[RMDB]
RNA sequence: GGGAACGACUCGAGUAGAGUCGAAAAGCCGCCGCCGGAGGGCGGCGCGCCACCGCCUUUGCCGGGGCACCGGGUCAGGCCCGAGAGGGAGCAGCCCACCCCGGACCCGCGGCCGCUCGGGGGUCGCCGUUAAACCCUAAUUCGUUAGGGUUUAACGAAAAGAAACAACAACAACAAC
Reactivity to 2A3 in 0.01 (KOAc 150mM, MgCl2 10mM, bicine 150mM(pH8.5), 24C), signal-to-noise 2, nucleotides 027 to 126: g020c010c000g030c040c000g020c030c040g200g050a170g180g230g000c000g010g000c000g010c040g000c000c000a030c010c010g090c000c030u110u130u170g050c000c010g000g000g010g000c110a040c060c200g010g000g020u070c000a030g020g000c000c000c000g080a090g010a080g020g000g010a020g000c000a000g000c000c000c000a020c000c000c000c000g000g000a010c000c000c020g020c010g000g000c010c000g050c030u110c040g070g000g000g000g010u010c030g010c010
Reactivity to DMS in 0.01 (KOAc 150mM, MgCl2 10mM, bicine 150mM(pH8.5), 24C), signal-to-noise 1, nucleotides 027 to 126: g010c030c020g140c030c000g130c150c080g000g020a230g000g020g030c060g020g110c090g000c130g050c040c060a210c130c040g000c120c100u020u000u030g000c000c000g000g000g020g030c160a050c160c140g000g030g000u040c000a300g030g030c000c000c010g010a110g030a200g000g000g000a040g000c010a250g000c070c000c000a180c000c000c000c000g000g000a080c070c060c080g000c070g030g000c010c030g000c130u020c060g010g000g010g000g010u010c000g030c040